[RMDB]
RNA sequence: GGGAACGACUCGAGUAGAGUCGAAAAGAUAUGGAAAUACGCAUCGAAGAACAAUGCACUAUCUUUCGUUAGAUCGGAAACGAUCUAACGAAAGACGAAUGCAUUGGGAGAUGCGGUUUCCUAAGUCCUACUGACUCAUCUUCGGAUGAGUCAGUAGAAAAGAAACAACAACAACAAC
Reactivity to 2A3 in 0.01 (KOAc 150mM, MgCl2 10mM, bicine 150mM(pH8.5), 24C), signal-to-noise 1, nucleotides 027 to 126: g110a070u160a100u180g050g230a040a000a000u300a300c000g000c010a010u040c000g300a300a010g040a100a000c010a030a000u000g000c010a020c060u110a020u000c050u030u000u000c000g000u000u000a000g000a000u000c010g020g000a020a040a070c020g000a000u010c000u000a000a000c000g000a030a000a000g020a000c000g030a130a290u020g020c030a010u000u020g030g030g000a050g000a010u000g000c020g000g000u000u000u050c000c000u010a120a000g090u000c010
Reactivity to DMS in 0.01 (KOAc 150mM, MgCl2 10mM, bicine 150mM(pH8.5), 24C), signal-to-noise 1, nucleotides 027 to 126: g000a160u000a300u010g020g000a000a040a020u000a100c000g030c010a030u010c000g000a190a210g010a090a240c000a000a010u000g030c000a000c090u000a240u000c000u000u000u000c000g050u000u000a010g000a020u000c010g000g000a140a130a170c010g020a000u000c000u000a000a000c000g010a000a000a010g020a010c090g000a030a050u000g020c020a000u000u000g020g020g000a150g010a010u000g040c000g020g140u000u000u000c000c000u010a050a130g000u000c050